[RMDB]
RNA sequence: GGGAACGACUCGAGUAGAGUCGAAAAGAGGGCACUGCUGUAGAGAGGGGCACAGCAGAGCCUCAGCCCCAGGGCAGGCCGUGAAAGGAGGCGGGGGCGCCCCGAGGCCCUGUGGACCCCAGGCAGGCCUACGGACAUUUUUCGAAAUGUCCGUAGGAAAAGAAACAACAACAACAAC
Reactivity to DMS in 0.01 (KOAc 150mM, MgCl2 10mM, bicine 150mM(pH8.5), 24C), signal-to-noise 2, nucleotides 027 to 126: g000a190g010g000g020c080a080c010u000g010c000u010g020u000a130g010a140g000a180g010g010g020g040c160a060c050a230g030c020a010g000a050g020c000c000u000c030a160g010c020c000c000c040a140g000g020g010c030a060g010g020c020c000g000u000g010a130a100a160g010g000a110g020g000c010g000g030g000g020g010c080g030c120c060c110c060g000a040g000g010c010c000c020u000g020u000g000g020a140c020c000c010c020a090g000g010c050a050g000g000
Reactivity to 2A3 in 0.01 (KOAc 150mM, MgCl2 10mM, bicine 150mM(pH8.5), 24C), signal-to-noise 1, nucleotides 027 to 126: g160a040g000g010g020c090a060c110u000g040c000u050g040u160a080g050a030g020a120g190g000g000g000c070a010c010a020g020c010a020g000a010g030c000c000u000c020a030g030c000c010c010c040a080g080g030g070c040a040g120g140c030c000g040u050g130a150a050a020g040g030a030g000g030c080g020g010g000g010g060c040g070c000c020c010c030g010a060g010g000c000c000c010u010g010u010g020g030a130c010c020c020c000a020g030g020c020a010g040g020